Record summary
The record gives the reactivity of an RNA of 177 nucleotides to 2A3 and DMS. DMS adducts were read by reverse transcription with MarathonRT. For 2A3 the reverse transcriptase was SuperScript II with manganese. Conditions: 150 mM KOAc, 10 mM MgCl2 and 150 mM bicine (pH 8.5), 24 C.

[RMDB]
RNA sequence: GGGAACGACUCGAGUAGAGUCGAAAAUUGAGAACCGAUGAAGGACGUGCCAAGCUGCGAUAUGCCUUGGGGAGGUGCAUGGAGCCAUUGAUCCAAGGAUUUCCGAAUGGGACUUCCUGUUUAACACAUACUUCCGUCACUUCGGUGACGGAAGUAUAAAAGAAACAACAACAACAAC
Reactivity to 2A3 in 0.01 (KOAc 150mM, MgCl2 10mM, bicine 150mM(pH8.5), 24C), signal-to-noise 2, nucleotides 027 to 126: u100u110g110a020g060a140a040c000c010g060a170u090g010a090a000g000g000a000c030g000u010g000c010c000a000a000g000c000u000g000c000g110a120u010a000u050g060c000c000u000u000g010g000g000g030a010g000g010u000g000c050a080u300g040g000a040g000c000c000a050u060u010g010a010u000c010c000a000a000g000g010a020u010u010u000c000c010g050a000a020u080g040g000g000a000c000u020u020c020c020u070g080u000u250u140a210a110c090a000c020
Reactivity to DMS in 0.01 (KOAc 150mM, MgCl2 10mM, bicine 150mM(pH8.5), 24C), signal-to-noise 2, nucleotides 027 to 126: u010u010g000a110g010a090a280c000c000g010a070u010g010a060a110g000g000a000c010g000u010g010c060c030a030a110g020c040u020g100c150g000a040u020a030u030g020c030c000u000u000g000g000g000g000a040g000g040u000g000c050a250u010g000g020a090g020c060c000a220u000u010g060a060u000c010c000a020a040g000g000a020u000u000u000c010c000g010a210a060u000g000g020g000a160c020u010u010c000c020u010g000u000u000u020a040a080c160a050c260